[RMDB]
RNA sequence: GGGAACGACUCGAGUAGAGUCGAAAAUUGCGCUUGCCUAUUUAGGCAUACUUCUCAGGAUGGCGCGUUGCAGUCCAACAAGAUCCAGGGACUGUACAGAAUUUUCCUAUACCUCGAGUCGGGUUUUAAAACGUUAGGCACUUCGGUGCCUAACGAAGCAAGAUGGAUAGUUCGCUAUCCAUCUUGCAAAAGAAACAACAACAACAAC
Reactivity to 2A3 in 0.01 (KOAc 150mM, MgCl2 10mM, bicine 150mM(pH8.5), 24C), signal-to-noise 1, nucleotides 027 to 156: u000u060g000c000g000c040u050u130g010c010c000u130a200u300u290u300a020g010g000c010a010u110a030c020u070u170c130u030c130a090g120g000a130u150g000g040c010g000c020g000u000u040g000c000a000g000u030c010c000a060a000c050a290a000g120a300u090c060c060a050g100g000g000a020c000u000g020u000a020c020a020g170a100a020u030u000u000u010c000c000u000a030u020a090c030c040u020c000g010a000g000u020c000g000g000g000u060u080u000u080a070a110a000a000c000g000u000u000a000g020g000c030a010c020u010u030c290g030g020u000g020c000c000u000a000a000c000g000a000a000